[RMDB]
RNA sequence: GGGAACGACUCGAGUAGAGUCGAAAACUUGGCAAGCUGCGCUUCGGCCAGCGUUGCGUUCGGCGGAUCGAAAUAGGCGCAGGAAUAUUGUUUGUCGGGAUCGAGGAACAGGUCGUAAAGCUCGCCAGUCAUACCCAGUAUUCGUACUGGGUAUGACAAAAGAAACAACAACAACAAC
Reactivity to DMS in 0.01 (KOAc 150mM, MgCl2 10mM, bicine 150mM(pH8.5), 24C), signal-to-noise 3, nucleotides 027 to 126: c030u000u010g020g020c020a050a030g020c010u000g010c120g010c020u000u000c090g030g030c030c010a090g010c040g010u000u010g010c070g000u000u010c090g000g020c060g020g010a090u000c060g010a060a110a130u010a120g020g000c040g000c030a050g010g000a090a080u020a110u010u000g010u010u000u000g000u010c020g020g010g010a070u020c020g010a080g020g000a030a060c050a030g000g000u000c040g010u000a080a120a100g000c020u000c050g000c020c020a090
Reactivity to 2A3 in 0.01 (KOAc 150mM, MgCl2 10mM, bicine 150mM(pH8.5), 24C), signal-to-noise 2, nucleotides 027 to 126: c010u050u040g030g010c020a040a020g010c010u030g000c010g010c030u050u060c080g050g000c010c000a000g020c020g090u040u090g040c030g030u080u070c040g070g040c000g010g000a100u110c070g040a050a110a050u160a110g120g000c020g000c020a010g010g060a020a080u110a090u120u130g100u110u040u080g130u040c000g000g040g080a080u130c000g020a020g050g000a040a040c040a060g000g050u010c020g020u090a060a000a050g010c010u010c020g010c020c010a020

Conditions: 150 mM KOAc, 10 mM MgCl2 and 150 mM bicine (pH 8.5), 24 C.
Chemical mapping of a 177-nucleotide RNA with DMS and 2A3.
The 2A3 profile rests on 2,253 reads.
Values cover nucleotides 27 to 126.
DMS adducts were read by reverse transcription with MarathonRT.
The DMS profile rests on 3,824 reads.